Notes
Conditions: 150 mM KOAc, 10 mM MgCl2 and 150 mM bicine (pH 8.5), 24 C. The record gives the reactivity of an RNA of 207 nucleotides to DMS and 2A3.
[RMDB]
RNA sequence: GGGAACGACUCGAGUAGAGUCGAAAACGGGUUGAAGUGGCUUCUCCUGGGCGAUCGCUCGCUGUUUUUGUGGCUGGCUUUCAGCGGGCUGGAGGAGCCGGGAGCGGAGGCGGAGGACCGAGCCAAAGAUGCUAUGUUCACUUCGGUGAACAUAGAACUAUUAUGAACGGUUCGCCGUUCAUAAUAGAAAAGAAACAACAACAACAAC
Reactivity to DMS in 0.01 (KOAc 150mM, MgCl2 10mM, bicine 150mM(pH8.5), 24C), signal-to-noise 1, nucleotides 027 to 156: c060g000g030g030u010u000g030a110a140g050u000g030g040c000u000u000c010u020c010c030u000g040g020g070c050g020a100u010c090g000c020u030c040g070c000u010g020u000u000u010u020u000g020u000g030g000c020u000g010g030c120u000u020u000c020a040g000c020g020g020g020c010u000g030g000a060g060g010a080g050c000c010g010g000g010a120g000c090g000g010a180g000g000c060g010g000a150g000g010a120c050c040g000a100g010c040c020a070a080a090g000a140u000g040c020u000a010u000g030u000u000c000a000c000u000u010c300g020g000u010g000a000a030c000a000u000a000g000a040a110
Reactivity to 2A3 in 0.01 (KOAc 150mM, MgCl2 10mM, bicine 150mM(pH8.5), 24C), signal-to-noise 2, nucleotides 027 to 156: c010g000g050g000u070u140g080a110a050g050u110g120g000c020u010u010c000u010c000c010u050g060g070g080c060g090a100u100c090g000c000u000c010g000c000u010g060u030u040u030u110u060g080u050g040g000c070u040g010g030c000u010u030u020c010a000g000c030g000g020g000c040u020g010g010a010g000g000a000g000c010c020g000g000g000a010g000c050g000g070a030g040g060c080g020g010a080g020g020a010c020c070g040a020g040c020c020a020a100a030g120a030u160g040c000u000a000u000g000u000u000c000a000c010u030u050c220g040g000u000g000a000a000c000a000u000a000g000a010a010

For DMS the reverse transcriptase was MarathonRT. It was measured as part of the RMDB library M2RFPK.